[RMDB]
RNA sequence: GGGAACGACUCGAGUAGAGUCGAAAAAUUAAAAAAUGAAGCAAAAGACAACCACCUUUCCCGCUGACAAUAGCGUUAUCCCUCUGCACUUCGGUAAUAUGAGGGCACAGUAAAUCCCGCAAGGAUGAUGAUCAACAGGGGUUCGCCCCUGUUGAAACCCAUACAUAUUGUUCGCAAUAUGUAUGGGAAAAGAAACAACAACAACAAC
Reactivity to DMS in 0.01 (KOAc 150mM, MgCl2 10mM, bicine 150mM(pH8.5), 24C), signal-to-noise 1, nucleotides 027 to 156: a130u030u060a000a040a170a020a050a120u010g000a130a080g010c060a080a070a080a140g000a130c070a120a080c000c010a060c020c010u000u000u010c030c010c010g040c080u000g000a150c100a090a090u000a050g010c060g050u000u000a040u000c010c010c000u000c010u000g000c070a030c030u000u000c220g030g030u010a090a080u010a110u010g000a030g000g020g020c080a000c030a060g040u000a120a060a110u010c000c000c010g010c110a110a070g020g010a100u000g020a100u000g010a150u000c010a000a000c000a010g020g010g030g000u000u010c300g010c020c020c000c010u000g010u000u000g000a000a050a070
Reactivity to 2A3 in 0.01 (KOAc 150mM, MgCl2 10mM, bicine 150mM(pH8.5), 24C), signal-to-noise 2, nucleotides 027 to 156: a030u140u150a010a000a010a000a000a040u120g020a080a000g060c020a030a000a100a060g060a110c020a040a040c040c040a020c050c000u020u010u090c000c030c000g000c030u050g030a010c020a070a110u080a160g030c020g060u030u030a050u110c000c000c000u000c000u010g010c050a010c040u020u140c160g080g000u040a050a010u120a060u300g000a000g010g000g020c030a020c000a020g060u030a000a070a090u000c000c030c030g050c050a050a040g050g030a030u040g000a020u080g030a040u030c010a010a010c050a010g000g040g000g000u010u000c050g090c000c010c000c000u010g000u000u000g000a000a000a000